[RMDB]
RNA sequence: GGGAACGACUCGAGUAGAGUCGAAAACUUUCCCUUCUCUCGUCUUCCUCGGUCAACCUCCUGAGUUCCUCUUCUUCCUCCCUGCUGAGGUUCUUUCCUCCCGCGGAGAGUUGCUUCCUCUUGUUCUACCGCGUCUCCUUCGGGAGACGCAAAAGAAACAACAACAACAAC
Reactivity to 2A3 in 0.01 (KOAc 150mM, MgCl2 10mM, bicine 150mM(pH8.5), 24C), signal-to-noise 3, nucleotides 027 to 129: c010u020u040u030c000c000c000u090u020c010u010c010u010c020g030u000c000u060u040c030c000u020c020g030g020u110c040a040a040c000c000u050c000c010u030g000a010g020u010u000c000c020u000c000u090u000c000u030u020c000c000u040c000c000c000u010g030c020u040g050a100g000g070u030u010c000u020u070u030c010c000u020c000c050c000g020c020g010g020a060g000a000g010u030u080g060c030u040u010c010c000u020c000u040u070g040u110u000c000u020a070c020c030
Reactivity to DMS in 0.01 (KOAc 150mM, MgCl2 10mM, bicine 150mM(pH8.5), 24C), signal-to-noise 2, nucleotides 027 to 129: c130u020u000u010c000c000c000u000u050c120u010c080u010c100g020u030c040u000u000c080c020u020c060g000g000u060c060a090a170c010c000u000c010c010u020g000a000g050u030u000c000c000u010c060u020u020c000u050u040c000c040u000c060c000c060u030g030c040u020g020a000g010g050u030u050c050u000u000u000c050c060u000c020c020c010g000c300g030g030a030g020a040g030u000u000g010c070u030u010c000c030u000c090u000u000g000u030u000c000u000a190c140c090
The record gives the reactivity of an RNA of 170 nucleotides to 2A3 and DMS. The DMS profile rests on 17,330 reads. The data come from the RNA Mapping Database (RMDB), library 15KLIB. The reactions ran in a buffer of 150 mM KOAc, 10 mM MgCl2 and 150 mM bicine (pH 8.5), at 24 C.